An RNA of 177 nucleotides, treated with DMS and read out base by base. It was measured as part of the RMDB library RFMREP. Reactivities are given for positions 27 through 126.

RNA sequence: GGGAACGACUCGAGUAGAGUCGAAAAAGACCGUUGAUCACGGCCUGUGAAUGGCAAUCAAGCCACCGUCUUUUCUGUAAACAGGUUCUCUUGUGCAAAUCGCGUUUCAUGGACAGACGGUGUCUUGCUCUUGUAUACGCUUCGGCGUAUACAAGAGAAAAGAAACAACAACAACAAC
Reactivity to DMS in 0.01 (KOAc 150mM, MgCl2 10mM, bicine 150mM(pH8.5), 24C), signal-to-noise 2, nucleotides 027 to 126: a070g000a070c020c010g000u010u010g010a130u020c180a070c010g000g000c010c010u000g000u020g000a080a160u050g010g020c120a070a110u040c020a030a030g000c020c000a010c000c000g000u000c010u010u000u000u000c000u000g010u010a020a030a020c020a140g020g000u000u000c110u010c140u000u000g000u030g010c160a060a040a030u000c010g030c170g010u000u000u020c050a060u000g000g000a010c210a030g000a010c000g010g010u000g010u000c000u000u000g000